RNA sequence: GGGAACGACUCGAGUAGAGUCGAAAAUCUGACUGGUCCAUGCCUGUGUACUGGUGUUUAAACGUUGUUCAUAUAACCACAUGUGUGUACACACACACACCCAUGGCAUAGCACUGUAUACAGAAGAGAAGUCAGAAAAGUUCGCUUUUCUGACUUCAAAAGAAACAACAACAACAAC
Reactivity to DMS in 0.01 (KOAc 150mM, MgCl2 10mM, bicine 150mM(pH8.5), 24C), signal-to-noise 5, nucleotides 027 to 126: u000c040u000g010a100c090u000g000g000u010c020c040a070u010g010c100c020u010g020u000g010u000a040c030u000g020g010u000g010u000u010u000a060a110a130c190g000u010u000g020u000u010c160a080u010a070u000a100a050c030c070a040c160a250u000g010u000g020u000g010u000a100c230a120c240a070c100a020c030a010c020a030c020c290c060a060u000g000g000c120a080u000a040g010c010a030c030u000g010u000a020u000a050c040a030g010a090a110g010a190
Reactivity to 2A3 in 0.01 (KOAc 150mM, MgCl2 10mM, bicine 150mM(pH8.5), 24C), signal-to-noise 3, nucleotides 027 to 126: u040c020u040g080a050c050u100g020g050u000c010c030a040u100g070c020c000u010g000u020g000u020a010c030u090g000g060u040g050u020u100u120a090a150a070c120g020u040u060g070u170u130c120a060u090a010u060a220a050c060c020a040c030a120u070g010u010g000u000g020u090a060c100a000c030a000c000a000c000a000c000a010c200c030c000a040u050g050g000c050a040u050a020g000c010a000c020u000g000u010a020u020a020c020a010g030a020a010g060a030